[RMDB]
RNA sequence: GGGAACGACUCGAGUAGAGUCGAAAAUAGACCUGAUUCGUCAGGUCUACCAGCGAGGGAGAGAGCGACGGUCCCACGCUCCCAGGGUCGCACGCUCCCAAAGACUUCCUGAAUUCGUUCAGGAAAACCCCUUAUCAUCAUUCGUGAUGAUAAGGGGAAAAGAAACAACAACAACAAC
Reactivity to 2A3 in 0.01 (KOAc 150mM, MgCl2 10mM, bicine 150mM(pH8.5), 24C), signal-to-noise 3, nucleotides 027 to 126: u060a000g000a000c000c000u000g010a020u030u060c140g080u010c100a000g000g000u010c000u000a020c010c020a050g070c040g110a140g020g040g000a070g000a020g000a000g050c030g040a050c020g020g100u130c000c010c020a020c060g070c030u030c000c030c010a020g080g020g000u020c010g000c040a020c050g030c020u020c000c000c010a030a050a020g080a040c060u010u000c000c000u010g010a010a010u070u050c140g040u050u000c030a010g010g000a010a000a010a010
Reactivity to DMS in 0.01 (KOAc 150mM, MgCl2 10mM, bicine 150mM(pH8.5), 24C), signal-to-noise 3, nucleotides 027 to 126: u000a010g000a010c000c000u000g000a020u000u000c160g010u000c000a000g000g020u000c000u000a020c060c060a100g010c090g010a250g000g010g010a070g000a060g010a050g020c020g010a080c030g010g000u010c010c020c010a130c090g000c070u000c000c000c000a140g000g000g010u000c020g020c020a160c060g000c020u010c000c000c010a050a090a090g000a140c160u000u000c000c010u000g010a020a030u000u020c170g000u000u000c020a020g010g000a010a010a090a130
This 177-nucleotide RNA was probed chemically with 2A3 and DMS. For DMS the reverse transcriptase was MarathonRT. 2A3 adducts were read by reverse transcription with SuperScript II with manganese. For 2A3, 6,431 sequencing reads were counted. The RNA was probed in 150 mM KOAc, 10 mM MgCl2 and 150 mM bicine (pH 8.5) at 24 C.